An RNA of 207 nucleotides, treated with DMS and 2A3 and read out base by base. The DMS profile rests on 2,761 reads. The reactions ran in a buffer of 150 mM KOAc, 10 mM MgCl2 and 150 mM bicine (pH 8.5), at 24 C. Reactivities are rounded to 0.1 and cut off at 0 and 3.
[RMDB]
RNA sequence: GGGAACGACUCGAGUAGAGUCGAAAAAGGAUACUCUGGUCAUAUAAUAGCAGUGGUGUGGUAGACCAUAAUACUUCUAGGUUUGAUAAAAUGCAAACAAAAACGAAGAAAACACAAACGAAGUUCCAACAUUUAUGUUAAAUGCUGGACAAGCAAAUCAUGUAAAGUUCUUCGGAACUUUACAUGAAAAAGAAACAACAACAACAAC
Reactivity to DMS in 0.01 (KOAc 150mM, MgCl2 10mM, bicine 150mM(pH8.5), 24C), signal-to-noise 2, nucleotides 027 to 156: a100g000g010a190u010a060c100u000c050u000g020g010u000c060a070u010a020u020a090a090u000a180g030c020a040g030u000g030g000u000g060u010g020g030u000a150g020a130c020c020a080u010a060a040u000a080c030u000u000c040u000a100g040g020u000u000u010g020a100u000a030a020a070a100u010g000c020a060a090a140c070a030a060a060a040a120c100g000a150a070g010a060a090a050a100c060a120c070a070a040a070c090g010a100a130g010u000u000c030c010a030a030c020a010u000u010u000a090u010g010u000u000a030a050a040u000g010c030u000g010g010a100c060a050a100g050c040a070a050a100
Reactivity to 2A3 in 0.01 (KOAc 150mM, MgCl2 10mM, bicine 150mM(pH8.5), 24C), signal-to-noise 2, nucleotides 027 to 156: a010g060g020a040u040a100c030u020c020u090g010g020u020c040a030u120a030u040a190a090u060a040g030c050a010g010u020g030g010u000g010u030g050g010u020a040g020a030c010c000a020u070a080a040u060a080c010u010u010c020u040a030g020g140u010u000u040g010a010u060a060a140a090a040u300g020c000a040a020a000c000a020a130a040a030a020c070g030a010a050g030a030a090a050a000c090a020c010a020a090a000c040g060a060a000g060u130u020c020c000a010a010c000a010u010u060u110a070u130g040u020u050a050a030a010u000g020c010u000g000g000a010c020a050a000g030c020a030a070a040